Structure probing data (2A3 and DMS) for a 177-nucleotide construct. The 2A3 profile rests on 1,268 reads. Reactivities are given for positions 27 through 126. The data come from the RNA Mapping Database (RMDB), library M2PK90.

RNA sequence: GGGAACGACUCGAGUAGAGUCGAAAAGGAAAUAGGUAUGCGGUCGCUAUUAAAAUAUUGCGACAAAGUGGCACACAGCAAGCGAGUGGUGACGAGUGCACACAAGUCGUUCCCAGCCAGAAAAAAACUACACGAAAAAGUUCGCUUUUUCGUGUAGAAAAGAAACAACAACAACAAC
Reactivity to 2A3 in 0.01 (KOAc 150mM, MgCl2 10mM, bicine 150mM(pH8.5), 24C), signal-to-noise 1, nucleotides 027 to 126: g050g010a050a100a040u140a050g040g020u100a080u150g110c110g050g000u010c010g000c040u030a000u000u120a050a020a050a050u230a070u060u090g000c000g000a000c030a050a060a010g050u060g010g030c040a020c000a000c030a030g060c000a070a070g010c020g090a050g060u060g030g010u030g050a040c000g010a040g090u150g010c030a040c010a000c000a090a010g000u000c020g000u000u010c000c030c000a010g030c060c020a070g100a060a100a010a030a000a000a000
Reactivity to DMS in 0.01 (KOAc 150mM, MgCl2 10mM, bicine 150mM(pH8.5), 24C), signal-to-noise 1, nucleotides 027 to 126: g020g000a060a110a070u010a040g020g030u000a050u010g030c080g010g000u000c010g030c000u010a000u020u050a050a160a150a100u020a030u000u000g000c020g000a040c000a060a110a060g020u000g020g010c020a030c040a100c060a080g020c050a060a040g000c110g020a040g020u000g010g000u010g030a060c030g010a130g010u000g010c060a030c060a050c050a090a010g010u000c010g010u000u000c000c000c000a100g000c120c180a120g000a000a000a080a060a070a080a170